[RMDB]
RNA sequence: GGGAACGACUCGAGUAGAGUCGAAAAGAGCAUGUCUUCGGACAUGCUCAAACGAGAAACGGCAAAUAAGCGGAUCCCAGGCGAUCGUACGCCAUACUCGAAAAAGUAUAGUCUUCGGACUAUACAAGUCGUACUAUAUGUUCGCAUAUAGUACGACAAAAGAAACAACAACAACAAC
Reactivity to 2A3 in 0.01 (KOAc 150mM, MgCl2 10mM, bicine 150mM(pH8.5), 24C), signal-to-noise 7, nucleotides 027 to 126: g000a000g010c000a000u000g000u000c020u060u070c240g050g000a000c000a010u010g000c000u000c000a000a010a010c020g000a000g030a030a110a020c030g040g000c050a060a080a170u220a210a090g300c090g070g040a040u010c010c010c030a050g110g010c050g010a030u090c060g050u080a050c050g000c000c010a020u060a060c020u030c010g060a130a050a010a020a000g000u000a000u010a000g000u000c010u020u050c260g090g010a000c000u000a000u000a000c000a000a010
Reactivity to DMS in 0.01 (KOAc 150mM, MgCl2 10mM, bicine 150mM(pH8.5), 24C), signal-to-noise 5, nucleotides 027 to 126: g010a020g000c000a010u000g010u000c000u000u010c220g030g000a020c010a000u000g010c010u010c000a020a040a110c030g010a020g000a070a140a160c110g000g020c020a080a100a130u010a100a110g020c050g010g000a040u000c020c010c060a210g010g010c030g010a060u000c140g000u020a110c060g020c010c000a100u010a080c020u000c000g000a110a050a070a090a110g010u000a000u000a000g000u010c010u000u020c170g010g000a020c000u000a000u000a000c000a070a070
Structure probing data (2A3 and DMS) for a 177-nucleotide construct.
For DMS the reverse transcriptase was MarathonRT.
The RNA was probed in 150 mM KOAc, 10 mM MgCl2 and 150 mM bicine (pH 8.5) at 24 C.
The 2A3 profile rests on 14,601 reads.